The record gives the reactivity of an RNA of 177 nucleotides to 2A3 and DMS. DMS adducts were read by reverse transcription with MarathonRT. It was measured as part of the RMDB libraries RFM100 and RFMREP. The reactions ran in a buffer of 150 mM KOAc, 10 mM MgCl2 and 150 mM bicine (pH 8.5), at 24 C.

[RMDB]
RNA sequence: GGGAACGACUCGAGUAGAGUCGAAAACAAGCGGUUUGUUUACAAACCGCAUACGAUAAACGAUGUUUGCCGUUUACGGCAAACUCGAAGAUAAACAGUGAGGCUGAAUUCCUGCCGAGCUGUUUAUCUUGUGAAGUUUGUUCGCAAACUUCACAAGAAAAGAAACAACAACAACAAC
Reactivity to 2A3 in 0.01 (KOAc 150mM, MgCl2 10mM, bicine 150mM(pH8.5), 24C), signal-to-noise 9, nucleotides 027 to 126: c050a060a040g010c010g000g050u010u020u020g140u070u260u210a120c020a000a000a000c010c000g010c000a000u110a020c030g070a070u150a100a130a010c020g010a020u140g000u000u000u000g000c010c010g050u090u220u240a170c050g010g000c010a000a000a000c000u000c000g020a030a020g020a030u030a010a000a000c000a000g010u010g030a010g020g000c020u030g050a190a200u260u150c040c030u060g000c000c000g000a000g000c000u000g000u000u000u000a000u000
Reactivity to DMS in 0.01 (KOAc 150mM, MgCl2 10mM, bicine 150mM(pH8.5), 24C), signal-to-noise 9, nucleotides 027 to 126: c080a130a090g010c000g020g000u000u000u000g010u020u020u020a090c020a010a010a000c000c000g020c000a020u020a020c260g010a110u040a080a100a220c030g010a030u030g000u000u000u000g000c000c000g020u010u020u010a090c020g010g010c000a000a000a000c000u000c000g000a080a030g010a010u010a000a000a010c010a000g010u000g010a300g010g000c000u000g010a170a190u020u030c130c050u000g000c000c000g000a300g000c000u000g000u000u000u000a000u000